[RMDB]
RNA sequence: GGGAACGACUCGAGUAGAGUCGAAAAUGCAAGGAAUGCGGCGCUGAGUCGGCUCAGUCGCCCGAACAGAUCACGAAGGCGCUCUAUCUGGGGCCGCACCUUCUGAACGCGCUGAAGGCGCUCGGCGUGCGUAGGGGUAUUUCGAUACCCCUACGCAAAAAGAAACAACAACAACAAC
Reactivity to DMS in 0.01 (KOAc 150mM, MgCl2 10mM, bicine 150mM(pH8.5), 24C), signal-to-noise 1, nucleotides 027 to 126: u020g000c050a010a130g000g010a170a090u000g040c030g040g040c000g070c000u010g010a000g020u000c160g030g000c060u000c050a010g040u020c020g010c000c090c040g010a120a120c090a100g000a150u000c110a110c140g010a040a070g020g040c050g020c020u000c040u000a120u010c220u000g000g120g010g010c080c060g060c130a070c020c010u010u000c060u010g040a050a140c170g000c050g020c070u000g000a090a100g020g040c020g040c000u000c000g000g020c010g000
This 177-nucleotide RNA was probed chemically with DMS.
Values cover nucleotides 27 to 126.
It was measured as part of the RMDB library OK2TST.
The RNA was probed in 150 mM KOAc, 10 mM MgCl2 and 150 mM bicine (pH 8.5) at 24 C.